Conditions: 150 mM KOAc, 10 mM MgCl2 and 150 mM bicine (pH 8.5), 24 C. This 177-nucleotide RNA was probed chemically with DMS. For DMS, 629 sequencing reads were counted.
[RMDB]
RNA sequence: GGGAACGACUCGAGUAGAGUCGAAAACACUAAGGAUCAGGUUGGGGGCACAGUGUGUCCGAGGAGGAAUCCUCCUGAUAGGAACUGGAAUGUGCCUUGAAGGGGACACCAUGUGUAUAAGAACAUCGCGACAAGUAUCGUUCGCGAUACUUGUCGCAAAAGAAACAACAACAACAAC
Reactivity to DMS in 0.01 (KOAc 150mM, MgCl2 10mM, bicine 150mM(pH8.5), 24C), signal-to-noise 1, nucleotides 027 to 126: c080a000c060u000a060a110g010g010a050u000c090a060g000g010u000u000g000g030g010g020g000c010a010c060a080g010u000g020u000g060u010c060c140g030a020g060g010a000g000g050a190a290u000c000c000u000c050c040u000g000a270u020a040g000g010a010a060c000u010g020g010a070a120u000g010u010g000c020c030u000u010g000a140a120g010g010g020g040a030c070a080c060c060a050u000g020u000g000u000a090u000a210a040g000a110a110c150a050u080c120